[RMDB]
An RNA of 177 nucleotides, treated with DMS and 2A3 and read out base by base.
It was measured as part of the RMDB library VIROID.
The reactions ran in a buffer of 150 mM KOAc, 10 mM MgCl2 and 150 mM bicine (pH 8.5), at 24 C.
DMS adducts were read by reverse transcription with MarathonRT.

RNA sequence: GGGAACGACUCGAGUAGAGUCGAAAACGUCUCACCUGAAGAGGACAAAAGUCCGAAACAGUAUGUUCAGUCUUUAUCUCUCGCUGAAAGUUUUAAGUCGGAAGAAGUUUCUUCCUGACUGAGCCAACGUGAAUCUUAAGUUCGCUUAAGAUUCACGAAAAGAAACAACAACAACAAC
Reactivity to DMS in 0.01 (KOAc 150mM, MgCl2 10mM, bicine 150mM(pH8.5), 24C), signal-to-noise 4, nucleotides 027 to 126: c120g010u010c040u000c020a120c160c030u010g000a070a070g010a300g010g000a030c040a090a110a090a110g000u010c000c030g000a190a120a060c040a080g010u010a060u000g010u000u000c030a030g000u000c030u000u000u010a080u010c030u000c020u000c060g010c040u000g000a070a090a130g010u000u000u000u000a100a030g020u000c010g000g000a010a000g010a040a290g010u000u000u010c000u000u000c000c000u010g030a010c010u000g000a060g000c060c080a090a190
Reactivity to 2A3 in 0.01 (KOAc 150mM, MgCl2 10mM, bicine 150mM(pH8.5), 24C), signal-to-noise 3, nucleotides 027 to 126: c020g090u000c010u000c030a060c000c010u010g030a100a050g030a050g030g000a000c020a080a300a050a010g000u000c000c000g010a030a050a010c010a010g060u150a110u170g060u020u010c020a020g010u060c040u100u130u040a140u000c070u020c020u030c030g050c050u060g090a120a090a090g060u000u050u090u220a090a020g020u030c010g020g020a000a010g020a040a030g050u140u250u060c000u010u020c010c050u070g000a010c010u000g020a010g000c000c010a060a080
Background:
2A3 adducts were read by reverse transcription with SuperScript II with manganese.